[RMDB]
RNA sequence: GGGAACGACUCGAGUAGAGUCGAAAAGAUAUGGAAACAGCCUACAUGCGACGCGAAGAACAAUAUCGUUAAUCGGAAACGAUUAACGAUAUUGGGAGCGUCGACCCAUGCGCUGUUUCCUAAGUCACAAGUAAUCUACCUUCGGGUAGAUUACUUGAAAAGAAACAACAACAACAAC
Reactivity to DMS in 0.01 (KOAc 150mM, MgCl2 10mM, bicine 150mM(pH8.5), 24C), signal-to-noise 3, nucleotides 027 to 126: g010a030u000a300u030g010g010a000a000a000c010a010g000c010c020u030a080c070a010u010g020c030g020a010c000g030c000g010a120a170g010a220a160c010a000a010u000a000u000c000g020u000u010a000a000u000c000g020g000a100a070a300c000g000a000u000u010a000a020c000g010a000u000a000u010u000g000g000g000a140g000c000g000u000c000g000a130c280c300c060a020u000g000c150g000c000u000g020u000u000u000c000c000u000a000a070g000u010c040a270
Reactivity to 2A3 in 0.01 (KOAc 150mM, MgCl2 10mM, bicine 150mM(pH8.5), 24C), signal-to-noise 2, nucleotides 027 to 126: g030a040u100a050u160g000g020a000a000a000c000a000g040c020c100u200a090c050a100u100g040c010g000a010c020g160c020g210a300a150g050a230a050c010a040a020u010a000u000c000g000u000u010a000a000u000c010g010g010a040a060a110c000g000a010u010u000a000a000c010g020a000u000a010u000u000g000g000g000a020g000c000g010u000c000g000a000c020c020c020a030u030g010c040g010c040u000g000u000u000u000c000c000u010a080a030g010u000c030a010
Structure probing data (DMS and 2A3) for a 177-nucleotide construct. DMS adducts were read by reverse transcription with MarathonRT. For DMS, 2,389 sequencing reads were counted. The RNA was probed in 150 mM KOAc, 10 mM MgCl2 and 150 mM bicine (pH 8.5) at 24 C.